Structure probing data (DMS and 2A3) for a 177-nucleotide construct. 2A3 adducts were read by reverse transcription with SuperScript II with manganese. Source: RMDB library OK2TRN, as collected in RNAgym.
RNA sequence: GGGAACGACUCGAGUAGAGUCGAAAAGGAGGAGGUCUGCCCAAUUUCCCUUAUAUCCCUAACACGGCAGACUUCGAAUUGCCUGAGAAAGGGAAAUUGGUGUUAGGGAUAUGUCUCGGACCUCAGACUACACCAAUCUAUUCGUAGAUUGGUGUAGAAAAGAAACAACAACAACAAC
Reactivity to DMS in 0.01 (KOAc 150mM, MgCl2 10mM, bicine 150mM(pH8.5), 24C), signal-to-noise 9, nucleotides 027 to 126: g010g010a210g010g010a020g000g000u000c000u000g000c090c030c070a080a140u000u000u000c000c000c010u010u010a050u000a040u000c000c000c000u000a040a050c030a040c070g010g010c070a060g000a080c090u010u010c130g010a070a080u000u000g010c000c000u000g000a160g010a080a120a090g000g000g000a010a030a040u000u000g010g010u000g010u000u000a020g000g000g000a030u000a020u000g010u010c070u000c020g000g010a030c020c010u000c020a140g000a260
Reactivity to 2A3 in 0.01 (KOAc 150mM, MgCl2 10mM, bicine 150mM(pH8.5), 24C), signal-to-noise 5, nucleotides 027 to 126: g070g020a040g050g020a000g000g000u000c000u030g050c020c000c020a020a050u020u020u010c010c000c000u020u090a090u000a010u040c010c000c010u010a010a000c010a000c040g070g030c040a040g020a070c000u080u040c020g040a080a070u050u040g070c000c000u060g020a060g150a130a080a040g070g010g000a040a040a030u050u090g080g000u030g020u030u040a020g000g000g000a000u010a020u060g040u000c030u010c030g020g010a010c000c000u010c010a010g040a030

The 2A3 profile rests on 16,825 reads.